[RMDB]
RNA sequence: GGGAACGACUCGAGUAGAGUCGAAAAUGGUGAUGGGCGUAGUAGGGAUUACAUCAAGUUGCAAAGUAUGUCUGUUUCGGGAGUGAUACAUGCGAAGGCUAAUGGCAAUGAUGAUCCUAUGGAGGUGGUUCCAAAGACAGUUCGCUGUCUUUGGAACAAAAGAAACAACAACAACAAC
Reactivity to DMS in 0.01 (KOAc 150mM, MgCl2 10mM, bicine 150mM(pH8.5), 24C), signal-to-noise 4, nucleotides 027 to 126: u040g020g050u000g000a060u000g010g000g010c040g030u010a060g040u010a070g010g010g010a060u020u020a080c130a060u010c110a080a120g000u000u020g010c040a110a090a130g000u020a040u000g000u010c070u020g020u010u020u010c040g030g010g010a100g030u020g020a080u020a060c100a060u020g000c060g000a080a120g000g000c030u010a050a070u010g010g010c070a050a040u010g030a060u020g000a100u010c030c000u010a020u030g020g000a040g000g030u020g000
Reactivity to 2A3 in 0.01 (KOAc 150mM, MgCl2 10mM, bicine 150mM(pH8.5), 24C), signal-to-noise 5, nucleotides 027 to 126: u150g010g040u080g010a070u070g040g000g000c040g010u040a030g030u030a050g050g010g060a050u070u130a060c040a080u070c040a070a050g070u020u020g020c030a060a010a100g050u090a120u140g070u020c060u040g070u040u040u040c030g000g040g010a050g020u110g020a040u070a130c030a010u070g020c020g050a020a020g090g010c020u050a100a050u150g050g010c030a020a030u060g010a020u040g000a010u070c000c010u060a090u100g020g000a040g010g050u090g050